[RMDB]
RNA sequence: GGGAACGACUCGAGUAGAGUCGAAAAAUUUCACUUAUCUCUUCUAUUGGAAAUAAAUUUGGGUCAGGAAGCCCUGCAGCAAAAGAUAUAACAGUUCCACCACUUGCUACCUUCUGAGCUAUUUUCUGCCAUAAAUGACUUUCGAGUCAUUUAUGGCAAAAGAAACAACAACAACAAC
Reactivity to 2A3 in 0.01 (KOAc 150mM, MgCl2 10mM, bicine 150mM(pH8.5), 24C), signal-to-noise 3, nucleotides 027 to 126: a000u060u130u140c030a050c050u130u140a120u050c050u010c000u100u070c000u110a150u110u170g060g020a030a150a140u090a000a120a130u130u120u150g090g000g020u060c000a020g010g070a050a010g000c010c010c000u040g000c030a050g000c010a060a130a060a000g090a070u110a020u040a200a000c040a080g030u060u010c020c000a070c010c000a030c040u010u050g000c010u020a040c020c000u100u050c050u080g070a050g060c020u070a130u050u120u020u010c050u040
An RNA of 177 nucleotides, treated with 2A3 and read out base by base. Reactivities are given for positions 27 through 126. 2A3 adducts were read by reverse transcription with SuperScript II with manganese.